Chemical mapping of a 177-nucleotide RNA with DMS and 2A3.
The RNA was probed in 150 mM KOAc, 10 mM MgCl2 and 150 mM bicine (pH 8.5) at 24 C.
The data come from the RNA Mapping Database (RMDB), library M2PK50.
RNA sequence: GGGAACGACUCGAGUAGAGUCGAAAAGCCGAAGAGUUCGCUCUUCGGCGACGAAUUUGGCGUAGAUGAGAGUCUACAGUACUAGCCAUCCGAGAUGUACAAAUAAGCAUUGCUUCGGCAAUGCUAACAUUAAAACUACCUUCGGGUAGUUUUAAUGAAAAGAAACAACAACAACAAC
Reactivity to DMS in 0.01 (KOAc 150mM, MgCl2 10mM, bicine 150mM(pH8.5), 24C), signal-to-noise 6, nucleotides 027 to 126: g010c000c000g000a000a000g010a030g020u000u010c210g020c010u000c000u010u000c000g010g000c000g000a030c140g020a110a120u000u000u000g010g010c030g010u000a010g010a020u000g000a230g000a190g000u000c000u000a020c010a130g010u000a020c050u000a130g000c020c000a060u000c020c030g010a080g010a110u000g010u000a020c070a100a070a090u010a120a020g010c000a010u000u000g010c000u000u000c200g030g000c000a010a000u000g000c000u000a020a090
Reactivity to 2A3 in 0.01 (KOAc 150mM, MgCl2 10mM, bicine 150mM(pH8.5), 24C), signal-to-noise 5, nucleotides 027 to 126: g000c000c010g000a000a000g020a000g030u130u190c230g030c100u000c000u000u000c000g000g120c010g000a010c020g080a040a170u150u090u160g020g010c020g000u000a010g010a030u040g060a030g000a010g080u000c000u000a010c030a040g020u020a030c030u050a010g010c000c020a060u000c040c030g110a080g020a140u120g040u080a020c030a030a100a060u200a180a000g000c000a000u010u010g000c000u030u060c210g060g000c000a010a000u000g020c000u000a010a000